RNA sequence: GGGAACGACUCGAGUAGAGUCGAAAAGCUAGCCAGCGCACGAUGAGACUGCCGUGACGUCUAGCCUGCGUCUCAACUAGUCUCCAUCAAUCAAAACGCUGGGAUUGAUUUACGAGACUAGUACACAGUGUAUGCACUUCUUCGGAGGUGUAUACACAAAAGAAACAACAACAACAAC
Reactivity to DMS in 0.01 (KOAc 150mM, MgCl2 10mM, bicine 150mM(pH8.5), 24C), signal-to-noise 9, nucleotides 027 to 126: g010c010u000a080g010c080c020a070g010c040g000c020a020c040g000a090u020g010a100g010a080c080u030g010c070c030g010u010g000a080c040g010u020c020u000a070g000c020c020u000g000c060g010u010c010u010c030a130a040c000u000a000g000u000c000u000c000c010a060u010c070a010a010u000c010a050a060a080a110c110g010c120u020g010g010g000a030u000u000g000a010u000u010u020a160c300g000a010g000a010c000u000a000g010u010a090c170a090c200a110
Reactivity to 2A3 in 0.01 (KOAc 150mM, MgCl2 10mM, bicine 150mM(pH8.5), 24C), signal-to-noise 9, nucleotides 027 to 126: g010c010u020a010g020c010c030a020g010c020g000c020a010c020g050a040u130g030a030g080a120c070u100g060c040c010g030u030g040a140c020g020u050c020u010a010g000c000c010u030g020c030g060u000c000u000c020a020a010c000u000a000g000u000c000u000c010c000a010u020c010a000a000u000c010a000a030a050a090c100g030c110u120g040g010g000a000u000u010g000a000u010u000u070a050c040g000a000g000a000c000u000a000g020u060a010c090a000c010a030
An RNA of 177 nucleotides, treated with DMS and 2A3 and read out base by base. DMS adducts were read by reverse transcription with MarathonRT. The reactions ran in a buffer of 150 mM KOAc, 10 mM MgCl2 and 150 mM bicine (pH 8.5), at 24 C. Reactivities are given for positions 27 through 126.